[RMDB]
RNA sequence: GGGAACGACUCGAGUAGAGUCGAAAAGAUCGCCGAGCUCACCGACCGUGCCGGCGCUAUCGCCGACGCACUCCGAGACGGCGUCGCACCGAACGGUGCAGUGCUCUACCUCGAAGAGUCGAUGCUGCAACUGUGGUCGGUUCACGCGGCGCUGGCCGUACAAGGGAACUUUCGAGUUCCCUUGUACAAAAGAAACAACAACAACAAC
Reactivity to DMS in 0.01 (KOAc 150mM, MgCl2 10mM, bicine 150mM(pH8.5), 24C), signal-to-noise 2, nucleotides 027 to 156: g020a080u000c020g020c000c000g000a060g000c030u000c020a070c050c000g000a040c100c050g020u000g010c000c010g020g030c030g020c040u000a090u000c060g000c030c000g020a040c020g000c040a180c050u000c050c000g010a140g030a180c050g010g020c010g050u010c040g000c020a080c000c000g000a050a090c140g020g000u020g010c000a120g000u000g010c040u000c000u000a070c040c040u010c110g030a150a140g010a110g020u000c040g010a090u000g010c000u020g010c020a060a110c050u010g010u000g000g040u000c010g010g020u000u020c060a110c150g000c030g010g020c070g000c070u000g010g010c010c040
Reactivity to 2A3 in 0.01 (KOAc 150mM, MgCl2 10mM, bicine 150mM(pH8.5), 24C), signal-to-noise 5, nucleotides 027 to 156: g040a050u150c040g000c010c010g020a060g030c030u030c010a040c020c050g110a050c020c030g010u020g000c000c010g020g000c010g000c080u140a100u300c040g010c020c000g020a050c070g020c020a020c020u070c050c090g020a010g010a050c000g000g000c000g000u000c020g000c000a000c000c010g050a160a100c160g010g000u010g000c020a010g030u040g050c030u010c000u020a080c050c020u130c150g110a190a110g000a030g030u020c020g000a020u110g010c020u020g000c030a140a070c080u040g030u080g060g050u010c010g010g000u040u100c080a080c100g040c010g030g000c020g040c030u040g060g010c020c020
The record gives the reactivity of an RNA of 207 nucleotides to DMS and 2A3. The reactions ran in a buffer of 150 mM KOAc, 10 mM MgCl2 and 150 mM bicine (pH 8.5), at 24 C. In probing experiments dimethyl sulfate is read out at A N1 and C N3, which are open when not base-paired. The DMS profile rests on 4,705 reads.